An RNA of 177 nucleotides, treated with DMS and 2A3 and read out base by base.
Values cover nucleotides 27 to 126.
The 2A3 profile rests on 993 reads.
DMS adducts were read by reverse transcription with MarathonRT.
[RMDB]
RNA sequence: GGGAACGACUCGAGUAGAGUCGAAAAACAAUCGUUGGCAAUGGAACAGUUGUCGUCUAAACGAGGUAUGAUGAUUUAGAUGAUUGCUCAUAUCAAACGAGAACAAACAUACAAAACUGCCGCGGACACACUUCUUGGCAUUCGUGCCAAGAAGUGUAAAAGAAACAACAACAACAAC
Reactivity to DMS in 0.01 (KOAc 150mM, MgCl2 10mM, bicine 150mM(pH8.5), 24C), signal-to-noise 1, nucleotides 027 to 126: a080c090a120a050u080c030g020u000u070g030g000c040a030a050u010g020g000a100a110c210a060g000u010u000g010u000c080g040u000c030u020a030a030a130c050g010a300g020g010u020a000u000g000a030u010g000a060u000u000u020a150g020a110u020g000a050u010u010g000c280u000c030a090u000a080u010c080a060a040a150c050g000a080g020a100a100c050a060a080a030c160a010u040a090c050a030a040a010a070c160u000g000c020c000g000c020g000g020a110c210
Reactivity to 2A3 in 0.01 (KOAc 150mM, MgCl2 10mM, bicine 150mM(pH8.5), 24C), signal-to-noise 2, nucleotides 027 to 126: a000c050a010a080u140c020g010u050u300g020g040c000a020a010u060g020g010a170a000c020a120g030u040u060g090u070c050g000u030c020u160a140a030a000c050g060a060g150g000u090a050u090g060a050u020g010a040u010u010u150a180g010a140u190g010a040u020u030g010c010u000c000a000u010a010u080c080a090a040a000c030g020a010g040a100a000c010a020a160a000c020a050u260a030c040a000a070a000a000c040u010g010c000c000g000c020g010g040a010c030